[RMDB]
RNA sequence: GGGAACGACUCGAGUAGAGUCGAAAAGAUAUGGACCAUCGAACUACUCUAUUCUGGUCGGAAACGACCAUUAGAGAGCGAGUGGUCCUAAGUCAAAGAAAUACUCGGGUUCGCCCGAGUAUUUCAAUCACCGUUAAUAGUUCGCUAUUAACGGUGAAAAAGAAACAACAACAACAAC
Reactivity to DMS in 0.01 (KOAc 150mM, MgCl2 10mM, bicine 150mM(pH8.5), 24C), signal-to-noise 3, nucleotides 027 to 126: g000a060u000a300u010g000g000a020c000c000a050u010c030g000a090a080c020u010a170c010u000c000u000a020u010u000c240u010g030g030u000c000g020g010a080a100a190c000g020a010c010c020a030u000u000a010g000a020g010a010g000c010g000a130g020u000g010g000u000c000c010u000a020a080g010u000c030a100a110a130g010a010a010a000u000a000c010u000c000g000g000g010u000u020c240g020c000c000c000g000a020g010u000a000u000u000u000c010a100a170
Reactivity to 2A3 in 0.01 (KOAc 150mM, MgCl2 10mM, bicine 150mM(pH8.5), 24C), signal-to-noise 2, nucleotides 027 to 126: g030a030u070a050u130g000g000a000c010c010a000u070c030g010a150a190c030u300a210c010u150c000u010a080u290u040c100u190g000g030u030c010g000g000a050a050a010c000g030a000c000c010a000u000u000a020g000a000g000a000g020c000g020a080g160u060g000g000u010c000c000u000a000a000g020u010c020a120a030a150g000a000a010a000u000a000c000u010c000g000g050g000u080u070c120g110c030c010c000g000a000g000u000a010u000u000u000c010a000a020